[RMDB]
RNA sequence: GGGAACGACUCGAGUAGAGUCGAAAAGAGCUGCCAGCACUAAGCCGGACGGCGCCCUCGCACCGAGUUCCGCUGCGGGUUCGCCUGCAAGAAGGCAGGGGGUUGAGGCCCUGUCCGCCGCUGCGCUGCCACCUACUCUUCGCGCCGCUAGUCGAGCGUGUCAUUUUUACUUCGGUAAAAAUGACACAAAAGAAACAACAACAACAAC
Reactivity to DMS in 0.01 (KOAc 150mM, MgCl2 10mM, bicine 150mM(pH8.5), 24C), signal-to-noise 1, nucleotides 027 to 156: g030a060g040c050u000g000c100c020a040g050c010a070c020u010a120a140g030c060c010g010g000a140c030g020g030c100g000c040c020c030u000c030g040c030a030c030c010g000a300g040u010u000c030c000g000c130u000g050c010g000g000g000u020u040c300g020c000c030u040g030c030a180a100g000a050a060g030g040c030a250g000g010g010g120g040u000u020g040a090g000g020c010c070c010u010g060u000c020c130g070c020c020g000c080u000g030c070g030c010u000g030c080c030a090c040c020u070a040c000u000c020u000u000c040g000c010g010c030c030g030c000u000a100g010u000c060g010a080g000c040
Reactivity to 2A3 in 0.01 (KOAc 150mM, MgCl2 10mM, bicine 150mM(pH8.5), 24C), signal-to-noise 3, nucleotides 027 to 156: g070a040g000c010u020g010c020c000a000g000c010a020c120u190a080a020g060c050c000g010g010a010c000g000g030c040g030c060c020c000u000c010g000c000a050c030c010g050a050g150u140u050c000c010g010c000u010g010c010g010g040g000u020u030c190g080c030c000u010g000c030a070a100g050a050a070g130g040c030a080g060g030g000g010g000u110u300g030a040g030g000c020c010c030u060g000u000c000c000g000c020c020g000c010u000g020c080g000c060u020g000c000c000a010c000c000u050a050c020u000c000u070u070c030g000c020g030c060c010g050c110u090a030g110u140c030g040a040g060c060
Structure probing data (DMS and 2A3) for a 207-nucleotide construct. The RNA was probed in 150 mM KOAc, 10 mM MgCl2 and 150 mM bicine (pH 8.5) at 24 C. Values cover nucleotides 27 to 156. For DMS, 2,352 sequencing reads were counted.